[RMDB]
RNA sequence: GGGAACGACUCGAGUAGAGUCGAAAAGUCGUAUUCGUACGACCUAUUGGGGUCCUUCUUGAACGCUUUGAUCGGUGAACUACUUCUGAAGCCUCCACGGAAGCACCGGGAGCGUUCAAGAAGGACGGAGGCACCCUAUGAGACGAUUCGUCGUCAAGUACACCAUGAUUUUCGAAUCAUGGUGUACAAAAGAAACAACAACAACAAC
Reactivity to DMS in 0.01 (KOAc 150mM, MgCl2 10mM, bicine 150mM(pH8.5), 24C), signal-to-noise 1, nucleotides 027 to 156: g000u000c010g030u020a070u000u000c260g030u000a010c020g000a000c000c040u020a100u000u000g010g000g020g020u000c000c020u010u000c020u000u010g020a030a010c010g010c000u000u000u000g010a070u000c020g030g000u010g030a160a100c150u000a300c020u000u000c010u010g000a010a130g000c000c000u000c010c010a300c070g020g000a020a030g000c000a040c000c000g000g020g000a000g020c000g040u020u010c000a030a020g010a020a000g020g030a020c000g000g010a040g040g020c040a030c000c010c030u000a040u000g010a170g000a020c020g010a120u000u000c160g030u000c000g000u000c050a080a300
Reactivity to 2A3 in 0.01 (KOAc 150mM, MgCl2 10mM, bicine 150mM(pH8.5), 24C), signal-to-noise 6, nucleotides 027 to 156: g010u010c010g000u010a030u130u190c300g050u060a000c010g000a010c020c020u160a240u150u240g020g000g000g020u000c000c020u000u000c000u000u010g000a000a000c000g020c010u300u300u030g010a020u010c000g000g000u010g020a070a090c050u140a050c010u300u000c000u010g010a010a010g000c000c010u000c010c000a030c020g010g000a000a000g000c000a000c010c000g000g000g000a010g000c000g000u000u000c000a000a000g000a000a000g010g000a000c010g000g000a000g000g000c000a010c000c010c000u050a150u200g220a130g000a020c020g030a040u060u100c210g070u010c000g000u010c140a030a030